[RMDB]
RNA sequence: GGGAACGACUCGAGUAGAGUCGAAAAGAGGGGCGCGGGGUAAGCUUGUGUCCCGAAAGAGAAACAACUCAGACUAUGGUUAAGGCCCCUAAAUACUGGAUAAGUGUAAGGGAGUCUUUGGCCCAAGGUUAGUGUCACGAUUCGUCGUGACACUAACAAAAGAAACAACAACAACAAC
Reactivity to 2A3 in 0.01 (KOAc 150mM, MgCl2 10mM, bicine 150mM(pH8.5), 24C), signal-to-noise 3, nucleotides 027 to 126: g140a010g000g010g000g030c000g000c010g030g030g000g020u170a130a000g160c020u010u000g000u000g000u020c000c000c000g000a010a020a000g000a000g020a000a070a030c060a050a050c070u030c050a030g030a100c010u090a120u200g010g040u050u010a020a010g040g000c000c000c000c000u020a170a140a010u050a010c010u040g090g010a050u120a300a040g010u030g010u050a010a040g000g000g010a170g030u000c010u020u010u050g010g010c000c030c010a030a000g200
Reactivity to DMS in 0.01 (KOAc 150mM, MgCl2 10mM, bicine 150mM(pH8.5), 24C), signal-to-noise 3, nucleotides 027 to 126: g020a200g000g000g030g020c000g010c010g000g000g030g020u000a050a130g050c000u000u000g000u000g000u000c030c000c000g000a010a090a070g040a080g000a130a130a100c210a130a110c070u030c040a110g020a260c070u050a100u000g000g000u000u000a010a010g010g000c010c000c000c000u040a040a110a050u010a020c000u080g010g000a100u080a110a080g010u050g020u010a060a300g030g000g010a060g010u010c000u000u000u010g000g010c020c010c300a050a060g030

Source information:
Chemical mapping of a 177-nucleotide RNA with 2A3 and DMS. The RNA was probed in 150 mM KOAc, 10 mM MgCl2 and 150 mM bicine (pH 8.5) at 24 C. Reactivities are rounded to 0.1 and cut off at 0 and 3. Reactivities are given for positions 27 through 126. Source: RMDB libraries RFM100 and RFMREP, as collected in RNAgym.